[RMDB]
The data come from the RNA Mapping Database (RMDB), library TTRDEL. An RNA of 177 nucleotides, treated with 2A3 and DMS and read out base by base. The RNA was probed in 150 mM KOAc, 10 mM MgCl2 and 150 mM bicine (pH 8.5) at 24 C. 2A3 adducts were read by reverse transcription with SuperScript II with manganese. 2A3 is a SHAPE reagent: it acylates the 2'-hydroxyl of flexible nucleotides of all four kinds. The 2A3 profile rests on 35,677 reads. DMS adducts were read by reverse transcription with MarathonRT.
RNA sequence: GGGAACGACUCGAGUAGAGUCGAAAAGAUAUGGAUUACAUGGAGUCCAAGCGUCGGAAACGACGCACGGACUAUGAAGUGUUGUCCUAAGUCAAAACUAAGCAAGAUCUUCGGAUCUUGCUUAGAACUCUAAUUCUAUGUUCGCAUAGAAUUAGAGAAAAGAAACAACAACAACAAC
Reactivity to 2A3 in 0.01 (KOAc 150mM, MgCl2 10mM, bicine 150mM(pH8.5), 24C), signal-to-noise 6, nucleotides 027 to 126: g000a000u010a000u050g000g000a000u000u020a010c000a000u010g000g010a000g000u000c010c020a050a130g020c000g000u000c000g000g000a040a000a000c000g000a000c000g000c010a010c070g010g010a000c020u020a080u010g000a000a000g010u000g000u020u010g010u000c000c000u000a010a000g010u010c020a010a010a170a220c010u000a010a000g000c010a010a000g000a010u010c020u070u280c300g040g000a000u000c000u000u020g000c000u000u000a000g000a000a000
Reactivity to DMS in 0.01 (KOAc 150mM, MgCl2 10mM, bicine 150mM(pH8.5), 24C), signal-to-noise 8, nucleotides 027 to 126: g000a010u000a020u010g000g000a010u000u000a000c000a010u000g000g000a000g010u000c000c000a080a300g000c000g030u000c010g020g000a010a010a020c000g020a010c000g020c010a010c230g010g010a010c000u000a160u010g010a120a200g000u000g000u000u000g010u000c000c000u000a000a100g000u000c010a080a090a100a230c010u000a000a010g010c000a010a000g000a010u000c000u000u010c220g030g000a000u000c000u000u000g000c000u000u000a000g000a070a130